[RMDB]
RNA sequence: GGGAACGACUCGAGUAGAGUCGAAAAAAGCAGAACGAGGAGGCCCGGAGGACCAAUAGGCAGGCCGAGCUCUUUGCCCUUUACCCAUCAGUGGACGAGGUGGGUGCCACUGUUUCCAUACUGGAGAAUCUCAGUGAAGACUCUGAGAGUCAUGUGAGUAUAGGCUGAUAUUCGUAUCAGCCUAUACAAAAGAAACAACAACAACAAC
Reactivity to 2A3 in 0.01 (KOAc 150mM, MgCl2 10mM, bicine 150mM(pH8.5), 24C), signal-to-noise 3, nucleotides 027 to 156: a000a000g080c060a040g010a090a010c050g000a030g020g000a010g030g040c060c070c060g120g040a140g010g080a090c030c030a170a140u170a200g040g000c070a010g010g010c020c000g030a070g050c040u030c000u070u050u060g020c000c020c020u050u070u110a070c030c010c000a030u030c020a000g030u070g010g010a020c030g030a060g040g040u060g030g040g030u040g010c000c010a040c040u000g070u030u010u050c050c020a100u130a160c070u170g000g040a050g070a120a120u050c020u000c010a000g020u050g080a110a070g030a130c020u020c010u070g020a040g000a000g040u010c000a020u140g050u060g070a030
Reactivity to DMS in 0.01 (KOAc 150mM, MgCl2 10mM, bicine 150mM(pH8.5), 24C), signal-to-noise 2, nucleotides 027 to 156: a010a060g050c070a050g000a130a050c030g010a120g000g020a090g020g010c020c010c030g060g010a060g030g010a060c020c030a090a100u010a090g060g050c020a060g010g020c050c030g000a030g030c010u000c030u000u000u010g030c020c020c040u000u000u000a080c010c010c010a060u000c020a100g000u010g000g010a120c080g030a110g030g030u000g010g030g090u010g000c030c010a080c100u000g010u000u000u000c040c050a120u000a130c070u000g100g010a140g000a070a050u030c000u020c000a040g000u020g010a150a180g010a200c030u000c000u010g010a110g000a040g000u000c020a060u010g010u000g030a160
The record gives the reactivity of an RNA of 207 nucleotides to 2A3 and DMS. Values cover nucleotides 27 to 156. The DMS profile rests on 2,791 reads. For DMS the reverse transcriptase was MarathonRT.